[RMDB]
RNA sequence: GGGAACGACUCGAGUAGAGUCGAAAAAGUUCGCGCUUCCGUGAAACGCGAAAAUCGGACGGUGGCUGCAAGUCGCAUCGCAAAACCGCGGCAAGUGGAAUUAGCGAGAGGAGGCUGGGUUUUGGCUAGAACACACGGUACUUCGGUACCGUGUGAAGAUAAUUUGCACUUUCGAGUGCAAAUUAUCAAAAGAAACAACAACAACAAC
Reactivity to DMS in 0.01 (KOAc 150mM, MgCl2 10mM, bicine 150mM(pH8.5), 24C), signal-to-noise 2, nucleotides 027 to 156: a080g020u000u000c000g030c030g000c020u000u000c010c170g010u010g020a080a000a010c030g000c000g010a000a030a080a090u010c050g030g010a110c090g010g090u000g030g010c000u000g030c030a000a110g050u010c060g040c010a290u010c030g030c030a020a080a200a200c040c050g050c010g010g020c140a040a210g060u010g040g000a030a080u000u000a080g000c020g000a070g000a070g040g000a090g000g000c030u000g020g010g010u000u000u000u000g020g000c020u010a110g000a110a190c000a000c000a000c000g010g000u000a000c020u010u000c260g040g010u000a000c000c000g020u000g000u000g000a020a080
Reactivity to 2A3 in 0.01 (KOAc 150mM, MgCl2 10mM, bicine 150mM(pH8.5), 24C), signal-to-noise 2, nucleotides 027 to 156: a000g050u050u020c040g000c010g000c050u100u020c040c060g130u080g100a090a040a010c010g020c000g090a050a010a010a070u090c020g020g010a010c020g030g000u040g060g000c050u070g030c080a020a050g030u030c020g020c050a070u020c040g000c040a040a040a030a030c030c040g000c020g090g050c150a140a070g020u030g030g000a070a040u080u030a060g040c010g020a020g010a030g100g000a030g010g000c030u020g020g060g000u020u060u050u080g050g000c000u020a070g060a190a000c010a000c000a000c000g000g020u000a000c010u030u070c170g070g000u000a000c000c000g000u000g000u000g000a010a000
This 207-nucleotide RNA was probed chemically with DMS and 2A3. The data come from the RNA Mapping Database (RMDB), library M2RFPK. The 2A3 profile rests on 2,014 reads. The reactions ran in a buffer of 150 mM KOAc, 10 mM MgCl2 and 150 mM bicine (pH 8.5), at 24 C.